An RNA of 207 nucleotides, treated with 2A3 and read out base by base. Reactivities are given for positions 27 through 156. 2A3 adducts were read by reverse transcription with SuperScript II with manganese. The 2A3 profile rests on 554 reads. Conditions: 150 mM KOAc, 10 mM MgCl2 and 150 mM bicine (pH 8.5), 24 C.
RNA sequence: GGGAACGACUCGAGUAGAGUCGAAAAUUAAUGAGGGUUCAUAUGGUUUUUCUCAUUUAAUCUAGUAACAUGAUAAAUUACAUGGAUUUGUUUUUUUAAUGUUAAGCCAACCUUGCAUUUUUGACAUAAACCUAUUUUGAUAGUACUACCUUUUUAGGGCACAUACUAAGUUCGCUUAGUAUGUGCCAAAAGAAACAACAACAACAAC
Reactivity to 2A3 in 0.01 (KOAc 150mM, MgCl2 10mM, bicine 150mM(pH8.5), 24C), signal-to-noise 1, nucleotides 027 to 156: u020u000a020a030u030g000a030g000g000g000u110u150c050a000u130a070u240g000g000u070u040u000u060u050c000u050c010a030u020u080u100a020a020u010c020u010a060g000u060a090a000c020a050u030g040a080u120a190a230a060u110u070a030c040a070u080g070g070a160u090u000u050g050u010u080u000u110u070u030u040a120a010u010g000u040u040a080a000g000c000c000a010a010c030c000u000u050g040c010a000u000u020u000u020u110g070a050c000a010u110a090a110a040c010c000u140a100u110u180u060u030g090a050u040a040g000u020a060c030u010a040c000c040u240u300u270u040u110a060g000